[RMDB]
RNA sequence: GGGAACGACUCGAGUAGAGUCGAAAAGCGUAUGUUCGCAUACGCAUAAUGCGUACUACCUCUGAGGUGGUGGUAGGUCCCUAUCCCAAAUAGGAUAGGACCUAUAAUCACCACUACCCACCAGAGGUAUCGCUGGGGCGUCCGCUUCGGCGGACAACCAGUGUAACAGGUUCGCCUGUUACACUGGAAAAGAAACAACAACAACAAC
Reactivity to DMS in 0.01 (KOAc 150mM, MgCl2 10mM, bicine 150mM(pH8.5), 24C), signal-to-noise 3, nucleotides 027 to 156: g000c000g040u000a020u000g010u000u000c300g050c000a010u000a000c000g000c000a050u000a040a080u020g010c010g030u010a110c170u000a040c000c000u010c010u010g000a150g020g020u010g000g020u000g030g050u000a030g000g010u010c050c010c020u000a020u000c000c000c020a060a260a220u010a090g000g010a050u000a020g000g000a030c010c010u000a030u000a120a100u010c080a050c010c000a040c010u010a020c020c000c010a300c100c010a020g000a040g020g010u010a000u000c020g020c020u000g000g010g020g000c070g020u000c020c010g040c000u000u000c190g080g020c010g020g000a010c000a060a150
Reactivity to 2A3 in 0.01 (KOAc 150mM, MgCl2 10mM, bicine 150mM(pH8.5), 24C), signal-to-noise 6, nucleotides 027 to 156: g000c000g000u010a010u020g030u060u180c300g020c130a010u010a010c010g010c020a010u170a030a060u210g010c010g040u050a090c040u000a000c030c000u000c000u010g010a030g010g020u010g010g010u010g000g010u020a010g030g010u070c120c010c000u000a000u010c010c030c010a280a280a160u300a130g000g000a000u000a000g000g010a000c000c000u010a020u100a020a050u100c030a000c010c000a000c000u010a010c010c030c030a140c030c000a000g000a000g000g000u010a010u030c000g000c010u020g000g010g010g040c090g010u010c010c010g000c010u070u070c210g140g000c000g000g000a000c000a000a010